[RMDB]
RNA sequence: GGGAACGACUCGAGUAGAGUCGAAAAGGACACAACCUCGUGCGCGGGCAAGGGACCCCAGCUGCGCACACAGACGAAGGGCGCGGGCGCGUCGCGACAGCAGGGCGGUGGCCAUAGAGGUCGGCACCCGCUAAGAACCGUGUUGCAACGUACCUGCCAUUAACAAAAAGUUCGCUUUUUGUUAAUGAAAAGAAACAACAACAACAAC
Reactivity to DMS in 0.01 (KOAc 150mM, MgCl2 10mM, bicine 150mM(pH8.5), 24C), signal-to-noise 3, nucleotides 027 to 156: g030g010a140c050a090c050a080a080c030c010u000c040g010u010g000c020g040c020g010g030g020c010a100a000g010g040g010a250c030c010c000c040a160g020c030u000g020c000g010c020a030c010a160c070a160g010a110c060g000a130a080g020g000g000c040g040c010g010g000g020c010g010c020g010u000c050g020c000g020a060c020a050g010c040a120g010g020g010c020g010g000u000g020g000c010c000a160u000a090g010a160g010g030u000c010g000g010c030a060c030c010c000g000c050u000a040a120g010a100a130c050c050g000u010g030u000u010g020c000a010a020c010g020u000a040c000c010u000g010c020